[RMDB]
RNA sequence: GGGAACGACUCGAGUAGAGUCGAAAAAUACAGUGAGCAGUUGGCAUUGCAUGGAAAACUUUAAAUAAGCACCUGUACCAGUGAAGGGUGUAUCAGGUUUUAUGCUAUGGGCAUACUCAAGUACAGGCUCCUGUAACUAUUUCGAUAGUUACAGGAGAAAAGAAACAACAACAACAAC
Reactivity to 2A3 in 0.01 (KOAc 150mM, MgCl2 10mM, bicine 150mM(pH8.5), 24C), signal-to-noise 5, nucleotides 027 to 126: a000u100a020c050a020g110u020g050a020g020c020a020g040u080u060g050g030c030a020u040u060g010c030a030u040g040g070a040a050a040a050c020u090u160u160a160a220a100u170a170a030g020c010a010c020c000u040g040u130a110c020c040a100g070u050g230a090a070g040g000g000u020g020u050a080u090c050a030g020g020u010u020u020u070a040u040g020c020u030a090u090g050g010g000c010a010u030a040c010u010c020a030a030g030u020a060c020a070g050g100
Reactivity to DMS in 0.01 (KOAc 150mM, MgCl2 10mM, bicine 150mM(pH8.5), 24C), signal-to-noise 6, nucleotides 027 to 126: a090u010a060c080a080g030u010g010a060g020c040a030g000u000u000g010g010c020a040u000u000g000c040a030u000g020g000a070a040a040a060c040u000u010u010a070a090a110u010a090a120g010c060a080c020c010u000g010u000a090c130c090a120g010u010g010a100a150g000g000g030u010g010u010a050u010c140a050g000g000u000u000u000u010a040u010g010c020u000a050u000g000g000g010c040a030u000a050c030u000c030a060a080g010u000a040c110a100g010g010